RNA sequence: GGGAACGACUCGAGUAGAGUCGAAAAGAUAUGGACAACUACCCACCACGGUUGAAGCGUUGAAAUCGGAAACGAUGGAGCUUCAUCGUGAGGUUGUCCUAAGUCAAAAGGCCGGUUCGCCGGCCAACGUACCUAUUCUCUUCGGAGAAUAGGUACGAAAAGAAACAACAACAACAAC
Reactivity to DMS in 0.01 (KOAc 150mM, MgCl2 10mM, bicine 150mM(pH8.5), 24C), signal-to-noise 3, nucleotides 027 to 126: g010a090u010a200u000g010g010a020c000a000a010c010u000a100c020c000c000a300c150c000a000c000g010g010u000u000g010a000a000g010c000g000u010u020g010a040a230a020u000c000g010g000a070a050a180c000g000a020u000g000g000a110g010c010u000u000c000a000u000c000g000u020g000a090g010g010u000u000g000u000c000c010u000a030a100g000u010c140a050a100a110a120g030g010c000c000g000g000u000u010c170g020c000c000g010g010c000c010a010a020
Reactivity to 2A3 in 0.01 (KOAc 150mM, MgCl2 10mM, bicine 150mM(pH8.5), 24C), signal-to-noise 2, nucleotides 027 to 126: g050a100u260a140u210g000g020a000c000a010a010c020u190a240c040c010c000a000c040c020a000c010g090g030u190u290g040a000a000g000c010g160u300u070g040a030a040a000u000c020g010g030a040a020a030c000g000a000u010g000g020a000g000c000u020u010c000a000u010c000g010u000g030a030g000g010u000u000g000u020c000c000u020a060a030g120u070c060a000a120a070a040g000g040c010c050g020g010u050u140c190g020c030c000g000g000c020c000a000a010
Source: RMDB library TTRDEL, as collected in RNAgym. Chemical mapping of a 177-nucleotide RNA with DMS and 2A3. The DMS profile rests on 2,072 reads. For 2A3 the reverse transcriptase was SuperScript II with manganese.